[RMDB]
RNA sequence: GGGAACGACUCGAGUAGAGUCGAAAAGUAGAAGCUGUCAAGCAAAACCCCAAAACCUUACACUGAGAGCAUUUAGCCUGAUUACUCUUUAAAUCAAAUCAGGCAAUAGAGAGAAACUCGAGAGGUGAAACGGGAGUAAUGUUCGCAUUACUCCCAACUUCCAAGGUAGGUUCGCCUACCUUGGAAGAAAAGAAACAACAACAACAAC
Reactivity to 2A3 in 0.01 (KOAc 150mM, MgCl2 10mM, bicine 150mM(pH8.5), 24C), signal-to-noise 1, nucleotides 027 to 156: g020u040a080g080a210a040g010c030u030g130u250c170a020a110g010c040a000a040a080a210c010c000c000c010a020a070a060a100c030c020u040u210a000c080a000c050u130g010a070g010a000g080c000a080u050u030u030a010g040c010c000u010g000a000u000u050a060c010u030c030u220u260u110a120a140a070u210c070a070a000a000u000c000a000g010g000c000a000a000u000a000g000a020g000a000g010a000a080a000c030u010c080g050a040g020a000g100g050u060g090a080a100a170c130g000g010g000a000g000u000a010a010u010g030u030u050c290g010c100a000u000u000a000c000u000c000c000c000a000a000
The data come from the RNA Mapping Database (RMDB), library M2RFPK. This 207-nucleotide RNA was probed chemically with 2A3. The reactions ran in a buffer of 150 mM KOAc, 10 mM MgCl2 and 150 mM bicine (pH 8.5), at 24 C. The 2A3 profile rests on 433 reads.